An RNA of 177 nucleotides, treated with 2A3 and DMS and read out base by base.
Source: RMDB library OK2TRN, as collected in RNAgym.
The RNA was probed in 150 mM KOAc, 10 mM MgCl2 and 150 mM bicine (pH 8.5) at 24 C.
The DMS profile rests on 39,318 reads.
RNA sequence: GGGAACGACUCGAGUAGAGUCGAAAAGAGGAUUCAACGAGCUUCGUAGCAACGAUAGCAACGUAGCUUUUGCUACGACCCUAGCUAUCGAGGGCAGCUACGUCCCGUGCUCGAGGGCAGAAUCCGAAAUAAUUUUACGAUUCGUCGUAAAAUUAUUAAAAGAAACAACAACAACAAC
Reactivity to 2A3 in 0.01 (KOAc 150mM, MgCl2 10mM, bicine 150mM(pH8.5), 24C), signal-to-noise 9, nucleotides 027 to 126: g160a020g000g000a000u010u010c030a060a030c050g020a020g020c010u090u070c030g020u030a000g000c010a040a060c010g000a010u000a010g000c010a030a040c010g010u000a000g000c010u150u230u210u300g000c000u000a010c000g170a170c050c010c010u040a040g000c000u000a000u020c000g010a100g030g110g050c080a060g010c020u020a010c010g020u060c020c030c020g040u040g000c010u010c010g020a090g040g090g010c070a040g010a010a000u000c000c000g000a000
Reactivity to DMS in 0.01 (KOAc 150mM, MgCl2 10mM, bicine 150mM(pH8.5), 24C), signal-to-noise 9, nucleotides 027 to 126: g010a210g010g010a020u000u000c010a170a140c040g000a040g010c060u010u010c020g020u000a010g020c010a150a160c030g010a020u000a010g010c010a120a180c010g010u000a000g010c000u000u000u000u010g020c000u000a000c000g000a110c160c150c160u000a110g010c010u000a010u000c000g000a100g010g010g020c250a120g000c020u000a020c030g000u000c070c060c090g010u000g010c000u000c010g000a090g010g010g010c180a110g000a020a010u000c000c000g010a080